An RNA of 177 nucleotides, treated with DMS and 2A3 and read out base by base. The DMS profile rests on 18,778 reads. The RNA was probed in 150 mM KOAc, 10 mM MgCl2 and 150 mM bicine (pH 8.5) at 24 C. 2A3 adducts were read by reverse transcription with SuperScript II with manganese. For DMS the reverse transcriptase was MarathonRT. Source: RMDB library OK1LIB, as collected in RNAgym. High DMS reactivity at an A or C suggests that its Watson-Crick edge is free.
RNA sequence: GGGAACGACUCGAGUAGAGUCGAAAACUCUUGACGCGCAGCUCCUUGGGAAACCCCAGGGUCACGCGGGCAACGUCGCCCUCGAAGCUGCUCUCGGCGGGGGCCGUCUGGCCGGCCGUCAGGCUGGCACCGACUUUAUGUUCGCAUAAAGUCGGUGAAAAGAAACAACAACAACAAC
Reactivity to DMS in 0.01 (KOAc 150mM, MgCl2 10mM, bicine 150mM(pH8.5), 24C), signal-to-noise 6, nucleotides 027 to 126: c030u000c030u010u020g010a060c030g020c300g000c020a040g000c060u010c010c000u010u000g000g000g010a170a140a150c230c010c010c000a020g000g000g000u020c110a150c070g020c110g000g000g010c020a080a130c170g020u030c100g010c010c000c020u000c030g000a130a080g010c060u010g010c030u000c040u020c030g020g010c050g000g000g000g000g010c030c040g000u010c050u010g000g000c000c000g000g010c000c000g010u040c190a050g000g010c010u010g010g000
Reactivity to 2A3 in 0.01 (KOAc 150mM, MgCl2 10mM, bicine 150mM(pH8.5), 24C), signal-to-noise 9, nucleotides 027 to 126: c010u030c020u030u100g050a040c040g030c010g010c030a030g020c020u050c030c010u030u010g020g000g040a170a260a240c040c010c000c000a010g010g010g020u050c040a020c060g030c020g000g020g000c050a110a110c120g160u120c090g030c000c020c000u010c020g060a080a030g020c020u050g010c010u030c010u020c030g040g000c020g010g000g000g030g010c010c010g080u060c110u120g060g000c000c000g030g050c010c010g080u070c040a030g020g010c010u040g020g010